Source: RMDB library OK1LIB, as collected in RNAgym.
Structure probing data (2A3 and DMS) for a 177-nucleotide construct.
For DMS, 18,994 sequencing reads were counted.
The RNA was probed in 150 mM KOAc, 10 mM MgCl2 and 150 mM bicine (pH 8.5) at 24 C.
For 2A3 the reverse transcriptase was SuperScript II with manganese.
For 2A3, 17,448 sequencing reads were counted.
For DMS the reverse transcriptase was MarathonRT.
Values are in units of 0.01, from 0 to 300, in steps of 10.
RNA sequence: GGGAACGACUCGAGUAGAGUCGAAAAGCAUAGUUGUACUAAAAUGUACGGUGCGAAAGAGUGCUGUUUCUAUGGGCGCAGCCAAGUUCGCACGGCCCAGAACUGCAAUCUUAUGGCGAUAUGCGAACCCAAUUAAUUAGUUCGCUAAUUAAUUGGGAAAAGAAACAACAACAACAAC
Reactivity to 2A3 in 0.01 (KOAc 150mM, MgCl2 10mM, bicine 150mM(pH8.5), 24C), signal-to-noise 9, nucleotides 027 to 126: g010c010a010u030a030g160u090u290g010u020a010c010u130a060a170a200a080u150g000u000a000c020g050g060u130g030c020g060a050a020a010g080a020g020u090g000c010u010g050u070u090u020c060u070a220u150g050g020g000c070g010c090a020g020c030c050a130a050g100u160u150c030g000c040a020c070g040g000c010c000c000a000g010a010a010c020u060g010c020a020a070u010c010u020u090a110u140g090g000c020g030a040u010a020u080g010c010g020a080a070
Reactivity to DMS in 0.01 (KOAc 150mM, MgCl2 10mM, bicine 150mM(pH8.5), 24C), signal-to-noise 6, nucleotides 027 to 126: g020c010a010u000a020g010u020u030g010u000a010c010u020a090a070a160a090u040g020u000a020c000g000g000u030g000c000g000a090a040a030g010a060g010u010g010c000u000g010u030u010u010c020u030a110u020g020g000g000c070g030c130a070g000c030c080a090a110g010u020u040c200g000c010a040c130g020g010c010c000c020a030g000a010a020c030u010g000c060a040a050u000c020u010u010a070u010g010g010c000g000a110u010a020u010g010c000g020a080a170